The data come from the RNA Mapping Database (RMDB), library OK2TST. This 177-nucleotide RNA was probed chemically with DMS and 2A3. The DMS profile rests on 4,166 reads. For 2A3, 2,363 sequencing reads were counted. 2A3 adducts were read by reverse transcription with SuperScript II with manganese.
[RMDB]
RNA sequence: GGGAACGACUCGAGUAGAGUCGAAAAUUCAAAGCAUGUGGAAGGAUGGACGGCUGCCGGACGCGGUACGCGCGAAGCUGGAGGUGCUGGAAGGUGACAUCAGCAAGGCUGACUGCGGGCUGAGUCAUCGUUUUGGAAUUUUCGAAUUCCAAAACGAAAAAGAAACAACAACAACAAC
Reactivity to DMS in 0.01 (KOAc 150mM, MgCl2 10mM, bicine 150mM(pH8.5), 24C), signal-to-noise 4, nucleotides 027 to 126: u010u010c080a100a070a110g020c080a060u000g020u000g000g000a120a080g010g010a060u010g010g000a140c100g010g030c030u010g010c050c040g010g000a140c090g020c050g010g010u000a050c140g010c040g010c030g020a110a080g000c030u000g010g010a070g010g010u000g020c040u010g000g010a060a060g000g010u000g000a040c050a050u000c030a050g010c040a090a080g000g010c030u000g010a120c140u010g000c050g000g000g010c040u000g000a090g010u000c040a080
Reactivity to 2A3 in 0.01 (KOAc 150mM, MgCl2 10mM, bicine 150mM(pH8.5), 24C), signal-to-noise 2, nucleotides 027 to 126: u070u030c020a020a040a050g020c050a050u110g070u080g150g000a050a050g030g030a040u050g030g030a030c000g020g000c020u010g000c000c010g010g020a020c030g000c010g060g030u080a030c100g010c020g030c010g070a010a020g020c000u040g010g030a030g040g060u030g030c010u050g030g100a080a030g040g010u030g030a010c000a110u030c000a010g040c010a000a050g090g010c040u070g040a100c020u070g000c020g000g050g000c010u040g000a000g020u000c010a040